Source: RMDB library OK2TRN, as collected in RNAgym. This 177-nucleotide RNA was probed chemically with 2A3 and DMS. Values cover nucleotides 27 to 126. 2A3 adducts were read by reverse transcription with SuperScript II with manganese. The 2A3 profile rests on 9,395 reads. The reactions ran in a buffer of 150 mM KOAc, 10 mM MgCl2 and 150 mM bicine (pH 8.5), at 24 C.

[RMDB]
RNA sequence: GGGAACGACUCGAGUAGAGUCGAAAAGAUGGCUCUAAGGUAUUUGCCGGCUCGCUGUUCGAGUCGACAUGUACGUGGCUUGUCAACGCGUCUAAUGUUGACCACCGUCCUGGCGGCGGGCUUUGCCCUCCAGGACAGAUUUCGAUCUGUCCUGGAGAAAAGAAACAACAACAACAAC
Reactivity to 2A3 in 0.01 (KOAc 150mM, MgCl2 10mM, bicine 150mM(pH8.5), 24C), signal-to-noise 4, nucleotides 027 to 126: g080a060u140g050g010c020u020c050u130a080a100g100g000u050a100u050u080u110g020c000c010g040g000c070u090c040g030c080u090g040u170u160c020g010a020g000u000c010g000a000c000a010u050g030u030a010c030g060u020g010g040c070u080u100g070u090c020a040a000c000g000c010g070u040c060u180a160a070u080g010u010u010g010a010c000c010a060c020c030g040u040c010c030u040g110g000c060g010g000c020g020g000g000c000u030u060u060g020c000c010
Reactivity to DMS in 0.01 (KOAc 150mM, MgCl2 10mM, bicine 150mM(pH8.5), 24C), signal-to-noise 5, nucleotides 027 to 126: g010a090u010g010g010c020u000c080u020a100a120g010g000u000a030u000u010u000g010c060c010g000g010c010u000c000g000c280u010g020u000u010c030g010a060g030u000c000g000a010c010a020u000g010u000a000c000g010u000g010g000c050u000u010g010u010c180a090a040c010g010c080g000u010c150u000a120a050u000g000u000u000g000a020c010c090a090c060c030g010u000c040c040u010g020g020c050g000g010c040g010g000g000c020u000u000u000g010c030c030